[RMDB]
RNA sequence: GGGAACGACUCGAGUAGAGUCGAAAAACAUCUGCUAGAUUCAACAUUGGUCAAAUGAUGGCUAAGGAGUUAGGCUGCACCUUAUUCGAUAAAUUCAUGACUGUUAAUAAUGUUGGCAUUGGCAGUGCUAGAAAUGUUGAACUUAGAGGGACGUGGGACGACUAGGUUAUUUCGAUAACCUAGUCGUAAAAGAAACAACAACAACAAC
Reactivity to DMS in 0.01 (KOAc 150mM, MgCl2 10mM, bicine 150mM(pH8.5), 24C), signal-to-noise 2, nucleotides 027 to 156: a080c030a070u010c060u000g040c010u000a080g030a110u020u000c010a010a060c030a090u000u000g050g030u000c020a050a030a110u000g020a110u000g040g010c060u000a070a080g010g010a070g020u000u000a100g010g030c010u000g030c010a290c030c020u000u000a050u010u000c060g020a080u000a030a060a090u000u000c060a050u000g010a080c020u000g000u010u000a040a110u000a050a050u000g030u000u010g030g020c110a080u010u000g010g020c060a100g030u000g040c020u000a130g000a050a030a080u000g020u010u000g010a010a050c050u000u000a050g000a070g020g040g020a070c070g040u000g010g000g000
Reactivity to 2A3 in 0.01 (KOAc 150mM, MgCl2 10mM, bicine 150mM(pH8.5), 24C), signal-to-noise 4, nucleotides 027 to 156: a000c010a060u040c010u040g000c010u040a080g000a250u090u040c020a030a020c010a030u020u120g030g000u050c030a040a050a250u100g050a040u060g030g030c030u040a020a050g030g000a040g020u050u040a030g060g000c050u050g010c050a060c000c000u040u050a040u050u050c050g050a080u040a170a140a060u110u070c050a050u070g050a040c010u030g060u200u060a090a050u140a110a010u110g030u060u020g030g000c040a040u000u020g010g000c000a000g000u020g020c010u040a040g060a070a090a020u060g010u020u040g010a030a050c040u040u030a020g020a040g040g040g000a010c030g000u070g010g000g020

Source: RMDB library OK3TST, as collected in RNAgym. Chemical mapping of a 207-nucleotide RNA with DMS and 2A3. The DMS profile rests on 4,986 reads. DMS adducts were read by reverse transcription with MarathonRT. The reactions ran in a buffer of 150 mM KOAc, 10 mM MgCl2 and 150 mM bicine (pH 8.5), at 24 C.